Structure probing data (2A3 and DMS) for a 177-nucleotide construct. For DMS, 2,373 sequencing reads were counted. The 2A3 profile rests on 1,462 reads. The RNA was probed in 150 mM KOAc, 10 mM MgCl2 and 150 mM bicine (pH 8.5) at 24 C.

RNA sequence: GGGAACGACUCGAGUAGAGUCGAAAAACGGGCACGUUCGCGUGCCCGUAAUGAACGCUGCAUCGCGCAGAGAUCUCGCGAGAGCGCGAAUGCACAAAGAAACAUUUCCAGUUUUCGAACUGGAAAAUGAAGCCAAGUAAUUCGUUACUUGGCUUCAAAAAGAAACAACAACAACAAC
Reactivity to 2A3 in 0.01 (KOAc 150mM, MgCl2 10mM, bicine 150mM(pH8.5), 24C), signal-to-noise 1, nucleotides 027 to 126: a000c010g000g030g030c060a030c020g000u090u110c160g010c000g140u000g000c000c000c000g020u040a010a020u010g020a040a020c060g010c220u010g000c020a010u020c010g000c010g000c050a010g050a030g050a300u020c020u050c080g120c050g010a030g040a030g110c000g040c000g030a080a010u010g020c020a000c030a050a080a010g110a040a090a000c040a090u030u040u040c020c000a000g000u030u010u020u050c120g030a030a020c010u040g000g000a010a020a000a010
Reactivity to DMS in 0.01 (KOAc 150mM, MgCl2 10mM, bicine 150mM(pH8.5), 24C), signal-to-noise 3, nucleotides 027 to 126: a020c000g000g000g030c010a020c000g040u010u020c140g050c020g030u000g010c020c020c000g000u000a010a030u020g010a100a120c210g010c200u010g000c010a050u000c010g000c000g030c040a120g000a180g010a150u010c050u000c100g030c200g000a080g000a090g000c000g010c010g010a040a010u000g020c030a020c070a070a070a090g000a100a080a080c170a100u000u000u000c000c000a020g000u000u000u010u010c170g010a010a010c000u000g000g000a000a000a020a050